[RMDB]
RNA sequence: GGGAACGACUCGAGUAGAGUCGAAAACCGGCAGGGUCGCCCAGGAAUGGCGGGACCCCACUCCACCGGGGUCCGCGUUCCAUCCUUUCUUACCUGAUGGCCGGCAUGGUCCCAGCCUCCUCGCUGGCAACCGUAAAAUGUUCGCAUUUUACGGUUGAAAAGAAACAACAACAACAAC
Reactivity to 2A3 in 0.01 (KOAc 150mM, MgCl2 10mM, bicine 150mM(pH8.5), 24C), signal-to-noise 2, nucleotides 027 to 126: c000c020g030g040c040a050g000g000g050u050c010g020c030c010c010a000g050g090a110a050u070g300g300c070g000g000g000a060c000c000c000c020a030c050u110c020c010a110c040c100g010g000g020g000u020c010c030g060c030g060u070u060c000c000a030u030c000c000u070u130u000c030u090u090a080c000c020u130g200a210u120g230g000c000c000g000g020c010a110u110g090g040u070c020c020c000a020g030c020c000u020c000c010u050c030g010c020u020g060g000
Reactivity to DMS in 0.01 (KOAc 150mM, MgCl2 10mM, bicine 150mM(pH8.5), 24C), signal-to-noise 2, nucleotides 027 to 126: c010c010g020g030c050a140g000g000g020u010c100g030c060c050c060a120g010g020a060a020u000g010g020c020g030g010g010a040c010c000c010c000a090c110u000c100c100a080c140c120g000g000g000g000u000c000c010g000c020g010u000u000c020c000a120u000c030c030u010u000u000c030u000u000a070c030c030u030g000a180u000g000g020c000c020g000g010c080a070u000g030g010u000c030c010c010a220g000c030c050u000c060c010u010c070g000c030u010g010g010